Chemical mapping of a 177-nucleotide RNA with DMS and 2A3. For 2A3 the reverse transcriptase was SuperScript II with manganese. The RNA was probed in 150 mM KOAc, 10 mM MgCl2 and 150 mM bicine (pH 8.5) at 24 C. For DMS the reverse transcriptase was MarathonRT.
RNA sequence: GGGAACGACUCGAGUAGAGUCGAAAAGGUUCGCACUUCGGUGCGAACCAAAGGCUAAGCAAUAAAUAUCAGCUUGUUCGCUAAGCGACUAACGAGCAGAAAAAACCGUUUGGUUCGCCAAACGGAACACAAUCUAGAACUUCGGUUCUAGAUUGUGAAAAGAAACAACAACAACAAC
Reactivity to DMS in 0.01 (KOAc 150mM, MgCl2 10mM, bicine 150mM(pH8.5), 24C), signal-to-noise 3, nucleotides 027 to 126: g000g030u000u000c010g020c000a000c000u000u010c180g050g020u010g030c000g010a000a000c000c010a010a050a060g020g020c090u000a040a080g030c090a100a090u010a080a060a070u000a110u010c080a060g000c030u000u010g000u000u000c030g010c010u010a050a110g020c050g010a150c280u010a040a020c040g000a020g010c010a090g020a010a070a080a080a150a110c020c000g000u000u010u000g000g010u000u010c190g010c000c000a010a000a000c000g010g000a030a080
Reactivity to 2A3 in 0.01 (KOAc 150mM, MgCl2 10mM, bicine 150mM(pH8.5), 24C), signal-to-noise 3, nucleotides 027 to 126: g000g010u000u010c010g020c010a010c030u040u100c220g080g030u000g020c010g040a000a000c000c000a010a010a000g010g000c050u100a050a050g050c060a130a130u150a200a150a040u230a150u110c040a020g010c000u010u020g020u060u020c020g000c030u080a240a100g030c020g080a060c040u050a060a020c020g030a010g000c020a010g160a070a090a010a020a010a030c000c010g000u000u000u000g000g010u040u050c150g020c050c000a010a010a000c000g000g000a010a000